[RMDB]
RNA sequence: GGGAACGACUCGAGUAGAGUCGAAAACCUCCCGAUUCCGUCCAUCCCUCCCCCCAAGAGGGUCGCCCAGGAAUGGCGGGACCCCACUCAGCUGGGUGCCGCGUUCCAUCCUUUCUUACCUGAUGGCCAACCAUCACAUGUUCGCAUGUGAUGGUUGAAAAGAAACAACAACAACAAC
Reactivity to DMS in 0.01 (KOAc 150mM, MgCl2 10mM, bicine 150mM(pH8.5), 24C), signal-to-noise 1, nucleotides 027 to 126: c050c060u010c010c000c020g010a140u000u020c060c030g020u000c010c010a080u000c020c010c030u000c010c000c000c020c000c020a080a050g000a150g000g000g030u000c070g010c000c010c020a210g010g000a050a030u000g050g040c020g030g000g000a020c040c010c000c080a080c040u010c180a090g000c160u010g010g000g020u000g000c000c020g010c010g010u000u000c020c000a140u000c040c030u000u000u020c050u000u000a130c020c060u000g000a070u000g000g000c190
Source: RMDB library VIROID, as collected in RNAgym. Structure probing data (DMS) for a 177-nucleotide construct. The DMS profile rests on 1,036 reads. The reactions ran in a buffer of 150 mM KOAc, 10 mM MgCl2 and 150 mM bicine (pH 8.5), at 24 C.